[RMDB]
RNA sequence: GGGAACGACUCGAGUAGAGUCGAAAAGACACAGACAGUGAGACACUCUGACUGACACAGUCUGUGACUGUCUCAGUCACACAGUGAGUGAGUGACUGACUCAGACUGACUCACACACACUGUGAGUCACCGCCAGCGAGUUCGCUCGCUGGCGGUGAAAAGAAACAACAACAACAAC
Reactivity to 2A3 in 0.01 (KOAc 150mM, MgCl2 10mM, bicine 150mM(pH8.5), 24C), signal-to-noise 1, nucleotides 027 to 126: g030a010c010a000c020a090g070a040c030a000g050u010g070a040g080a040c020a010c070u050c080u100g040a020c040u010g010a020c020a010c000a090g000u010c040u170g200u140g040a020c010u000g000u000c000u030c030a010g000u000c000a000c000a000c000a010g090u060g100a050g100u050g020a010g030u000g150a090c030u010g010a090c010u030c060a000g010a230c040u070g020a000c000u000c010a030c000a000c000a010c000a020c080u090g020u030g000a000g050u020
Reactivity to DMS in 0.01 (KOAc 150mM, MgCl2 10mM, bicine 150mM(pH8.5), 24C), signal-to-noise 1, nucleotides 027 to 126: g020a240c040a060c050a040g000a100c060a060g050u000g010a060g000a140c050a030c050u030c020u010g000a050c140u000g010a080c090a000c000a040g010u000c000u010g000u010g000a020c000u000g020u000c160u000c000a000g020u000c000a010c100a090c100a050g000u040g040a070g020u020g000a060g040u000g010a150c040u000g020a020c030u000c060a040g000a120c200u020g010a030c000u000c000a000c020a050c130a180c160a080c210u010g010u000g040a040g010u020
Structure probing data (2A3 and DMS) for a 177-nucleotide construct. It was measured as part of the RMDB library OK2TRN. Conditions: 150 mM KOAc, 10 mM MgCl2 and 150 mM bicine (pH 8.5), 24 C.